[RMDB]
RNA sequence: GGGAACGACUCGAGUAGAGUCGAAAACCCUGGCUUCCGUCCCAGAUCGAGCAGCGCGAGGGCCGCAUCGUGCGUCAGGGCAACCAGCAUGACGAGGUCGAUAUCUUCGCCUAUGCCACCGAGGGCUCCCUGGAGGACUCUUCGGAGUCCUCCAGGGAAAAGAAACAACAACAACAAC
Reactivity to 2A3 in 0.01 (KOAc 150mM, MgCl2 10mM, bicine 150mM(pH8.5), 24C), signal-to-noise 1, nucleotides 027 to 126: c000c000c000u030g070g000c030u110u050c040c020g080u040c010c000c000a000g040a160u050c040g020a000g070c020a000g000c050g010c020g080a110g010g000g060c070c000g070c060a060u070c010g000u020g030c010g000u030c020a000g090g000g040c040a000a100c040c000a050g030c020a080u050g000a010c020g000a000g000g140u050c020g030a090u010a050u200c070u060u060c000g060c040c000u100a090u050g000c000c020a040c040c000g010a190g000g070g000c000u010